The record gives the reactivity of an RNA of 177 nucleotides to DMS and 2A3. The DMS profile rests on 2,773 reads. Reactivities are rounded to 0.1 and cut off at 0 and 3. For 2A3, 1,815 sequencing reads were counted. DMS adducts were read by reverse transcription with MarathonRT. It was measured as part of the RMDB library OK2TST.
RNA sequence: GGGAACGACUCGAGUAGAGUCGAAAACUGUGAUGUGGCAGCCCAACUAGGCUGUGCCGGGCUGGAUGUCAAUUCCGGCGUAGAAAGCGCCCCUGGCAUCAAAGACCCCCAACGGAUCGCCGCUGUACCACUAGGUAAUCUUCGGAUUACCUAGUGGAAAAGAAACAACAACAACAAC
Reactivity to DMS in 0.01 (KOAc 150mM, MgCl2 10mM, bicine 150mM(pH8.5), 24C), signal-to-noise 3, nucleotides 027 to 126: c060u010g020u000g010a080u010g010u000g000g010c020a030g020c010c010c070a090a170c240u000a070g010g020c010u000g000u000g000c040c050g010g000g010c080u010g000g000a030u010g020u000c040a050a090u000u010c140c230g000g020c010g020u000a110g020a070a140a190g000c020g010c030c010c100c070u010g020g020c010a010u000c030a030a110a080g000a280c020c010c000c020c060a050a100c060g010g000a070u010c070g020c020c030g020c030u000g010u020a210
Reactivity to 2A3 in 0.01 (KOAc 150mM, MgCl2 10mM, bicine 150mM(pH8.5), 24C), signal-to-noise 2, nucleotides 027 to 126: c030u070g050u090g080a050u110g050u090g090g020c000a000g000c000c000c030a050a100c130u120a060g040g030c030u030g030u070g080c010c040g000g030g000c050u030g020g020a030u020g050u100c030a010a070u220u020c070c000g000g000c000g010u010a100g280a170a160a030g030c000g010c020c030c000c030u010g000g000c030a000u030c010a050a300a160g090a180c020c010c000c000c030a040a020c040g020g050a060u040c030g030c070c000g050c020u030g000u030a050